[RMDB]
RNA sequence: GGGAACGACUCGAGUAGAGUCGAAAAGAUAUGGAACGAAUCAUACUACCCACCGAGGAUUCUCGGAAACGAGAAUUUCGAGGUAUGACUAUUCCUAAGUCGACACUGACGGCUUCGGCCGUCAGAAUACUAACAGCCGAUUCGUCGGCUGUUAGUAAAAAGAAACAACAACAACAAC
Reactivity to 2A3 in 0.01 (KOAc 150mM, MgCl2 10mM, bicine 150mM(pH8.5), 24C), signal-to-noise 1, nucleotides 027 to 126: g020a040u020a000u140g040g020a000a080c060g080a080a290u020c000a010u000a050c000u130a100c060c060c090a100c090c000g010a040g090g030a030u040u010c000u000c000g040g000a030a040a020c010g000a010g010a010a010u030u070u190c010g010a020g060g040u030a000u010g010a010c020u040a110u120u090c020c000u040a050a130g060u020c010g040a060c040a020c060u010g010a020c000g010g000c010u010u090c230g080g000c000c020g000u020c000a000g010a000a000
Reactivity to DMS in 0.01 (KOAc 150mM, MgCl2 10mM, bicine 150mM(pH8.5), 24C), signal-to-noise 2, nucleotides 027 to 126: g020a040u010a300u000g010g000a010a040c090g020a080a180u000c020a010u000a000c020u000a060c050c020c080a300c190c000g000a050g000g000a010u000u000c000u030c000g010g000a050a050a070c030g000a010g000a010a010u000u000u000c000g000a120g010g000u000a030u000g000a030c080u000a220u000u000c000c000u000a040a150g000u000c020g000a090c160a180c010u000g000a010c000g000g000c030u000u000c300g020g030c000c010g000u010c010a000g020a100a140
The record gives the reactivity of an RNA of 177 nucleotides to 2A3 and DMS. Reactivities are given for positions 27 through 126. Reactivities are rounded to 0.1 and cut off at 0 and 3. For DMS, 1,182 sequencing reads were counted. The RNA was probed in 150 mM KOAc, 10 mM MgCl2 and 150 mM bicine (pH 8.5) at 24 C. DMS adducts were read by reverse transcription with MarathonRT. The 2A3 profile rests on 1,451 reads.